The record gives the reactivity of an RNA of 177 nucleotides to DMS. The DMS profile rests on 723 reads. Reactivities are rounded to 0.1 and cut off at 0 and 3.
RNA sequence: GGGAACGACUCGAGUAGAGUCGAAAAUGAUGAAACAAAGGGCUGGUAAUACUGGCCCACUUGUUGCAAAUUCUACUGAGGAAUUUGAAGCAUGGAAGCGUAUGAUGAAGGCAUCCUCUGGAGAAGAAUAGUACUCCGAGUUCGCUCGGAGUACUAUAAAAGAAACAACAACAACAAC
Reactivity to DMS in 0.01 (KOAc 150mM, MgCl2 10mM, bicine 150mM(pH8.5), 24C), signal-to-noise 2, nucleotides 027 to 126: u010g000a210u000g040a090a090a010c060a000a110a190g020g000g020c000u010g020g010u000a120a070u000a300c060u000g010g000c020c000c000a010c020u000u000g000u000u020g040c040a100a020a090u000u000c010u000a150c130u000g010a150g010g020a000a020u000u000u010g010a100a140g000c040a010u000g000g000a160a060g010c080g000u000a050u000g000a080u020g000a160a070g020g010c130a060u000c000c010u000c000u020g000g000a060g000a030a060g000a100

Background: The data come from the RNA Mapping Database (RMDB), library OK2TRN.